[RMDB]
RNA sequence: GGGAACGACUCGAGUAGAGUCGAAAAGUCAAUGGGCCCACGCCUGAACUGGUAACUUGGAGGAAUGAGGGGUCAACUUUGCAAAUGGAUGAGUGAUCGUUAGAAGAUCCUUAGUCCCCUGGUCUUCUUGACACAUGAGGUAUAUACUUCUAGUCCAUCUCGUACUGUAGUUCGCUACAGUACGAGAAAAAGAAACAACAACAACAAC
Reactivity to 2A3 in 0.01 (KOAc 150mM, MgCl2 10mM, bicine 150mM(pH8.5), 24C), signal-to-noise 4, nucleotides 027 to 156: g040u020c020a010a070u100g020g030g020c020c030c020a030c050g040c010c000u110g030a100a050c060u070g030g040u100a060a090c050u030u070g040g040a010g000g050a050a100u150g030a080g010g040g000g000u010c030a030a040c080u120u110u130g030c040a030a080a110u090g020g010a030u040g000a020g040u070g040a150u050c050g030u100u060a020g020a050a010g000a020u010c000c020u040u050a040g060u110c020c000c010c000u000g000g000u000c000u020u000c000u020u070g020a010c010a000c010a090u080g000a010g010g040u030a080u030a020u030a290c000u030u020c020u010a000g040u000c000c010a010
Reactivity to DMS in 0.01 (KOAc 150mM, MgCl2 10mM, bicine 150mM(pH8.5), 24C), signal-to-noise 2, nucleotides 027 to 156: g020u000c030a070a080u000g000g030g000c020c030c020a090c070g000c060c000u000g020a090a080c080u000g020g030u000a070a110c050u020u010g020g030a100g010g030a060a060u000g010a070g020g030g030g020u000c040a060a120c070u000u000u000g060c060a120a090a100u000g040g010a120u030g010a160g020u010g040a060u000c020g040u000u010a100g010a050a020g000a030u000c010c070u000u020a100g000u000c020c020c010c050u000g000g010u000c010u000u000c050u000u000g020a040c000a060c050a130u000g010a030g050g010u000a110u000a130u000a060c030u000u010c010u040a060g000u000c010c040a150
Conditions: 150 mM KOAc, 10 mM MgCl2 and 150 mM bicine (pH 8.5), 24 C.
This 207-nucleotide RNA was probed chemically with 2A3 and DMS.
For 2A3, 2,613 sequencing reads were counted.
In probing experiments dimethyl sulfate is read out at A N1 and C N3, which are open when not base-paired.